An RNA of 177 nucleotides, treated with DMS and read out base by base. The data come from the RNA Mapping Database (RMDB), library OK2TRN. Conditions: 150 mM KOAc, 10 mM MgCl2 and 150 mM bicine (pH 8.5), 24 C. DMS adducts were read by reverse transcription with MarathonRT.
[RMDB]
RNA sequence: GGGAACGACUCGAGUAGAGUCGAAAAGCUUAUUUUCUGCUGUCUACCAGGAGUAAUCAAGGUCUAGGAACACCAUCUUUUGCAUGUCUCAGAUCUUAACAAUGUGUGUUCGUGAAGACAUUAGUCAGUGCAGUAGCUCAUUCGUGAGCUACUGCACAAAAGAAACAACAACAACAAC
Reactivity to DMS in 0.01 (KOAc 150mM, MgCl2 10mM, bicine 150mM(pH8.5), 24C), signal-to-noise 1, nucleotides 027 to 126: g000c120u010u010a130u020u000u010u000c020u010g020c070u000g030u010c020u020a110c110c040a170g000g010a050g080u000a040a120u000c120a110a080g010g000u000c060u000a200g000g000a040a050c010a030c140c030a020u000c200u010u000u010u010g020c120a160u000g020u020c090u000c120a060g000a020u000c060u000u000a090a040c180a080a090u020g010u010g020u010g000u000u000c020g060u000g040a110a020g000a030c070a090u000u000a060g010u010c070a070